[RMDB]
RNA sequence: GGGAACGACUCGAGUAGAGUCGAAAAUGCAAUUAAGGUUCAGAAUGCAGGCGAAACAGCAUAUGAAGGUAUGUAAACUAGGUGGUGAAUGGGUGACAUUUAGAGAGGUUCUUGCUGCUGCAGAUGCGCACUACGCUUCAUUCGUGAAGCGUAGUGCAAAAGAAACAACAACAACAAC
Reactivity to 2A3 in 0.01 (KOAc 150mM, MgCl2 10mM, bicine 150mM(pH8.5), 24C), signal-to-noise 1, nucleotides 027 to 126: u040g030c030a000a060u090u050a260a000g020g000u080u090c050a030g030a120a030u060g020c020a000g050g010c010g100a060a000a050c020a050g050c000a020u070a030u110g090a120a050g030g000u060a030u070g040u040a000a000a050c020u000a040g000g000u020g030g070u080g080a090a030u050g020g050g000u030g020a010c050a000u090u070u090a090g010a000g000a020g120g000u030u000c020u000u100g060c010u020g000c010u000g000c000a000g010a070u090g010c040
Reactivity to DMS in 0.01 (KOAc 150mM, MgCl2 10mM, bicine 150mM(pH8.5), 24C), signal-to-noise 2, nucleotides 027 to 126: u020g000c070a130a140u000u030a140a060g050g000u000u000c060a090g000a140a030u010g050c040a060g050g020c060g010a090a080a080c110a050g010c000a030u030a070u000g000a060a050g000g000u000a030u000g000u020a050a040a080c100u010a040g010g030u010g000g030u010g000a060a080u000g000g000g010u000g020a080c050a040u000u000u000a050g000a010g020a060g010g010u000u000c110u000u000g000c060u000g000c070u000g000c090a030g000a100u000g010c120

About this RNA: Source: RMDB library OK2TST, as collected in RNAgym. This 177-nucleotide RNA was probed chemically with 2A3 and DMS. For 2A3, 1,141 sequencing reads were counted. Conditions: 150 mM KOAc, 10 mM MgCl2 and 150 mM bicine (pH 8.5), 24 C.